[RMDB]
RNA sequence: GGGAACGACUCGAGUAGAGUCGAAAAGAUAUGGACGUAAUACCGCUAUGAAUACGCUGCAAAAUAAGAUAUCGGAAACGAUAUGUUAUGAAGUAUAGCGUUCAUAGCGGUAUUACGUCCUAAGUCAGUUGUUUAUUAUCUUCGGAUAAUAAACAACAAAAGAAACAACAACAACAAC
Reactivity to DMS in 0.01 (KOAc 150mM, MgCl2 10mM, bicine 150mM(pH8.5), 24C), signal-to-noise 5, nucleotides 027 to 126: g010a050u000a300u010g010g000a000c000g020u000a000a010u000a000c010c000g000c000u000a000u000g000a040a040u010a030c090g020c000u000g000c020a040a170a200a010u000a010a010g000a020u000a000u000c000g000g000a170a150a220c010g010a010u000a000u000g000u000u000a000u000g000a120a290g000u000a050u020a030g010c000g010u000u000c000a000u000a010g010c000g010g000u000a000u000u000a010c000g010u000c000c000u000a020a070g000u010c060a150
Chemical mapping of a 177-nucleotide RNA with DMS. DMS adducts were read by reverse transcription with MarathonRT. The data come from the RNA Mapping Database (RMDB), library TTRINS. The reactions ran in a buffer of 150 mM KOAc, 10 mM MgCl2 and 150 mM bicine (pH 8.5), at 24 C.